Structure probing data (2A3 and DMS) for a 177-nucleotide construct. The DMS profile rests on 31,288 reads. Source: RMDB library OK1LIB, as collected in RNAgym.

RNA sequence: GGGAACGACUCGAGUAGAGUCGAAAAGAAAACAAGUACCGAGAACAUUGUUUUCGCUGCUUGGCGUUGCCGUUUUGUGUUGCAGUUGGUUGGGUAACGCCGCAAAUACCAACGGUACAGAUAGAUAGACUACUAUUAUGUUCGCAUAAUAGUAGUCAAAAGAAACAACAACAACAAC
Reactivity to 2A3 in 0.01 (KOAc 150mM, MgCl2 10mM, bicine 150mM(pH8.5), 24C), signal-to-noise 9, nucleotides 027 to 126: g010a000a030a000a000c030a020a040g010u020a020c010c050g030a030g050a080a040c110a290u110u180g020u020u010u000u010c010g000c030u010g000c010u070u210g000g000c000g000u000u010g010c010c010g070u070u050u140u120g200u040g040u060u130g060c070a100g010u130u140g170g020u100u120g060g020g000u010a010a000c000g000c000c000g000c010a030a040a000u140a020c010c000a040a030c010g000g000u040a020c010a010g120a030u170a020g100a060u080a060
Reactivity to DMS in 0.01 (KOAc 150mM, MgCl2 10mM, bicine 150mM(pH8.5), 24C), signal-to-noise 8, nucleotides 027 to 126: g000a070a030a120a090c020a020a040g000u000a020c190c020g000a110g000a050a050c050a200u020u030g010u000u000u000u000c010g020c160u000g000c020u010u000g020g010c030g010u000u010g000c010c010g020u020u010u020u020g010u010g000u010u000g020c080a070g000u000u010g000g010u000u010g020g020g000u000a040a040c200g000c000c000g000c080a020a050a070u030a120c020c020a020a020c020g000g010u010a040c080a110g000a120u030a070g000a130u040a100